[RMDB]
RNA sequence: GGGAACGACUCGAGUAGAGUCGAAAACAACAAGCACAACAGGUCGCCCCACAGGUGAAUAUACAAACCACUCAUCAUUGACGACAUACGGCGCACGUUCGCCUAUUGGCACCACAAUGCGCUCUGUAUCAACCUCAGCUUCGCCUUUAACGUUAACCAACACUUAGCUCUUCGGAGCUAAGUGUUGAAAAGAAACAACAACAACAAC
Reactivity to DMS in 0.01 (KOAc 150mM, MgCl2 10mM, bicine 150mM(pH8.5), 24C), signal-to-noise 1, nucleotides 027 to 156: c040a040a080c040a090a110g040c070a170c010a140a210c070a070g020g010u010c040g040c010c000c040c020a130c070a110g030g080u000g020a040a090u000a090u010a170c110a030a120a110c090c020a060c030u030c080a100u020c050a130u000u000g000a050c060g000a070c030a070u000a070c100g010g040c040g050c080a010c100g020u010u020c070g090c020c040u000a060u010u000g070g020c020a080c040c080a070c070a110a090u000g000c030g000c030u010c040u010g060u000a040u000c050a080a020c000c030u000c040a080g040c040u030u000c050g000c020c060u000u000u000a040a070c080g040u010u000a070a090c180
Reactivity to 2A3 in 0.01 (KOAc 150mM, MgCl2 10mM, bicine 150mM(pH8.5), 24C), signal-to-noise 3, nucleotides 027 to 156: c050a010a000c000a050a030g100c050a040c020a140a080c020a050g000g050u010c020g010c010c010c000c010a030c020a020g000g000u040g030a060a020u190a000u030a070c130a100a080a070c030c030a030c050u090c030a070u020c020a070u070u180g040a030c060g010a010c020a040u090a030c080g020g000c020g000c000a020c070g050u140u130c060g010c030c010u130a200u090u160g030g000c030a050c060c040a030c080a060a060u050g010c010g000c010u030c040u110g010u010a040u060c010a020a060c000c030u040c040a010g000c000u050u050c030g030c010c000u080u020u060a060a020c040g030u060u090a010a030c100
Chemical mapping of a 207-nucleotide RNA with DMS and 2A3. Reactivities are given for positions 27 through 156.